[RMDB]
RNA sequence: GGGAACGACUCGAGUAGAGUCGAAAAGCAAAUCAAGGCUCAAAACAAAAGUAAAUGCGAAUAACAUCGUAAAAUUUGCUCGUAAGGACGCUCUAGUAGCUGCCUAAUUAGCCUCUUACAGGUUCGAGCGUCUUCGGUUUGACUCCGUUAAGGACUGGCACACUUAAACGUUCGCGUUUAAGUGUGCAAAAGAAACAACAACAACAAC
Reactivity to 2A3 in 0.01 (KOAc 150mM, MgCl2 10mM, bicine 150mM(pH8.5), 24C), signal-to-noise 2, nucleotides 027 to 156: g000c010a010a040a050u080c000a070a050g050g000c000u080c110a070a140a000a050c130a120a190a030a050g080u100a030a000a050u010g030c000g000a030a000u090a080a080c060a060u000c000g020u110a040a100a060a150u020u090u000g000c010u040c030g040u060a040a010g040g000a000c010g020c000u000c030u110a150g100u160a010g050c070u110g000c010c000u030a060a100u040u100a030g000c010c040u030c060u060u190a140c090a040g010g050u020u080c010g010a000g000c000g020u040c000u070u050c060g020g020u010u070u020g030a070c020u030c030c010g030u030u090a040a040g010g010a000c030u060g060